[RMDB]
RNA sequence: GGGAACGACUCGAGUAGAGUCGAAAAUUGAAGGUAAAACAGCCUGUGGGUGAAACACACCCACAGGGCCCAUUGGGCGCUAGCACUGUGGUAUCACGGUACCUUUGUGCGCCUGUUUUACCGAAGGAGCGAUGAGCCUUCGGGCUCAUCAAAAGAAACAACAACAACAAC
Reactivity to 2A3 in 0.01 (KOAc 150mM, MgCl2 10mM, bicine 150mM(pH8.5), 24C), signal-to-noise 7, nucleotides 027 to 129: u090u100g060a080a010g010g000u000a000a000a000a000c000a000g000c000c000u010g000u000g000g010g000u000g040a040a100a010c160a010c000a000c040c000c000a000c000a000g000g000g000c000c000c020a070u240u300g000g000g000c000g010c080u080a040g000c010a010c000u010g010u040g080g000u010a010u020c040a030c240g130g000u000a000c000c000u130u200u050g010u000g000c000g000c000c000u000g000u000u000u000u000a010c000c000g000a000a000g060g040a030g040c100
Reactivity to DMS in 0.01 (KOAc 150mM, MgCl2 10mM, bicine 150mM(pH8.5), 24C), signal-to-noise 6, nucleotides 027 to 129: u050u050g000a150a100g000g000u000a000a000a010a000c000a000g000c070c000u000g020u050g000g030g060u000g040a110a160a150c280a260c010a030c030c020c000a040c000a020g000g010g010c000c000c020a170u070u100g040g010g010c020g020c010u020a070g050c000a010c020u020g000u000g010g020u010a040u020c040a080c300g020g000u000a040c000c030u050u020u000g020u020g020c000g020c060c000u000g020u020u000u000u030a000c010c010g010a070a070g000g010a050g040c120
Structure probing data (2A3 and DMS) for a 170-nucleotide construct. Conditions: 150 mM KOAc, 10 mM MgCl2 and 150 mM bicine (pH 8.5), 24 C. For 2A3, 28,248 sequencing reads were counted. The DMS profile rests on 32,960 reads. Reactivities are given for positions 27 through 129.